[RMDB]
RNA sequence: GGGAACGACUCGAGUAGAGUCGAAAAGGAAAGCGCGCGUAUUGGAAACCAGGGCGCCAUAUUACGCGCGCAAGGAAUUGGGCCUUGGUUUUUUGGAAGGAUUAGAUAAUUACCCGGCGCCCGUCAAGUACCCAUUAAAUUUCGAUUUAAUGGGUACAAAAGAAACAACAACAACAAC
Reactivity to 2A3 in 0.01 (KOAc 150mM, MgCl2 10mM, bicine 150mM(pH8.5), 24C), signal-to-noise 2, nucleotides 027 to 126: g050g010a060a080a090g020c020g010c000g020c010g020u010a040u060u190g100g030a130a060a100c130c120a270g030g000g000c040g010c000c000a020u140a050u060u090a000c020g000c000g000c000g000c000a000a000g010g010a040a050u080u070g060g010g010c060c010u010u020g090g130u090u040u000u020u090u080g010g010a040a010g020g020a010u120u000a060g040a060u110a090a090u100u050a080c000c030c020g030g000c000g000c000c010c020g000u010c000a060a060
Reactivity to DMS in 0.01 (KOAc 150mM, MgCl2 10mM, bicine 150mM(pH8.5), 24C), signal-to-noise 2, nucleotides 027 to 126: g010g000a100a160a130g010c010g020c000g030c010g010u000a020u000u010g010g000a100a110a090c100c080a110g000g000g000c060g010c020c010a070u020a040u010u000a010c000g000c030g010c010g020c020a030a020g010g000a090a110u000u000g020g000g000c010c010u000u000g010g010u000u000u000u000u010u000g000g010a140a080g010g010a080u000u010a080g000a100u000a040a070u000u000a110c020c000c050g020g000c030g020c010c010c030g000u000c090a050a120
The record gives the reactivity of an RNA of 177 nucleotides to 2A3 and DMS. Values are in units of 0.01, from 0 to 300, in steps of 10. For 2A3 the reverse transcriptase was SuperScript II with manganese. For DMS the reverse transcriptase was MarathonRT. The reactions ran in a buffer of 150 mM KOAc, 10 mM MgCl2 and 150 mM bicine (pH 8.5), at 24 C.